[RMDB]
RNA sequence: GGGAACGACUCGAGUAGAGUCGAAAAUGCUGGGUGAACCGAACAGCGAUUUAGUUUUUUUAAUGAGAUUGGGCCCUGGGUGACUUGCCGCUGGUUUCUCCUGGCUUUGAUCAAAAUAUCUGCCUAGGUUUUCUGAUGUAUUCGUACAUCAGAAAACAAAAGAAACAACAACAACAAC
Reactivity to DMS in 0.01 (KOAc 150mM, MgCl2 10mM, bicine 150mM(pH8.5), 24C), signal-to-noise 1, nucleotides 027 to 126: u010g000c010u000g020g020g020u000g000a100a050c110c030g020a110a180c140a070g000c040g000a040u010u020u000a110g000u000u000u010u010u000u010u010a090a110u010g000a160g000a160u000u000g010g010g010c020c040c030u010g000g000g000u010g000a050c050u010u000g020c050c040g020c020u000g010g010u000u000u000c040u010c010c030u000g000g010c030u000u000u000g030a040u010c120a070a050a060a140u000a070u000c030u010g010c030c020u000a080g010
Overview
Source: RMDB library OK2TST, as collected in RNAgym. An RNA of 177 nucleotides, treated with DMS and read out base by base. The RNA was probed in 150 mM KOAc, 10 mM MgCl2 and 150 mM bicine (pH 8.5) at 24 C. For DMS, 1,120 sequencing reads were counted.